[RMDB]
RNA sequence: GGGAACGACUCGAGUAGAGUCGAAAAAGCCAACCAACAGAGAAGGGAAAGCAGUCUGUUCUGAACAUAGGGACAUAAGUUCAUUCAUGCCAAGUAUCUUUCCAGCAUGUUUCUCCCAUUUAGAAUACCCUAUUGUUGGGUUCGCCCAACAAUAGGGAAAAGAAACAACAACAACAAC
Reactivity to DMS in 0.01 (KOAc 150mM, MgCl2 10mM, bicine 150mM(pH8.5), 24C), signal-to-noise 1, nucleotides 027 to 126: a090g000c000c030a100a070c050c040a080a130c140a110g000a080g040a160a050g000g000g010a030a000a040g000c130a030g010u020c030u010g090u000u010c040u000g060a050a130c140a040u010a100g000g000g000a050c040a070u020a060a050g020u020u000c040a050u010u000c080a050u000g010c020c090a080a110g030u000a020u000c040u000u000u010c080c000a130g040c040a040u010g010u000u000u010c090u000c040c030c010a250u010u020u000a020g020a080a090u020a240
Reactivity to 2A3 in 0.01 (KOAc 150mM, MgCl2 10mM, bicine 150mM(pH8.5), 24C), signal-to-noise 1, nucleotides 027 to 126: a000g130c040c020a030a050c050c020a070a030c050a030g060a010g020a120a090g020g030g000a100a000a000g030c010a000g010u000c010u070g070u000u070c030u070g020a000a000c020a100u180a090g020g000g050a000c020a080u220a170a000g030u080u130c000a030u110u020c000a020u020g000c020c000a080a000g030u010a110u060c050u010u030u020c010c010a020g050c000a030u030g050u020u060u000c020u040c050c000c020a080u180u050u000a080g080a070a020u060a110